[RMDB]
RNA sequence: GGGAACGACUCGAGUAGAGUCGAAAAUGCUUGAUGUUACCCCGCUGAGCCUGGGUAUCGAGACCAAGGGCGGGGUGAUGACCAGGCUCAUCGAGCGCAACACCACGAUCCCCACCAAGCGGUCGGACUCCCCUGGCACAUUCGUGUGCCAGGGGAGAAAAGAAACAACAACAACAAC
Reactivity to 2A3 in 0.01 (KOAc 150mM, MgCl2 10mM, bicine 150mM(pH8.5), 24C), signal-to-noise 1, nucleotides 027 to 126: u300g020c020u020u090g000a000u120g000u070u120a060c000c000c000c000g030c000u030g000a010g040c000c030u010g000g050g040u010a110u120c190g070a140g170a160c000c020a080a140g050g060g020c000g000g000g010g010u030g000a020u000g000a000c000c000a010g000g010c000u000c000a020u000c020g030a020g000c030g030c090a040a030c000a000c040c000a020c030g000a030u030c000c000c000c000a000c020c020a000a080g000c030g060g000u050c000g000g060a080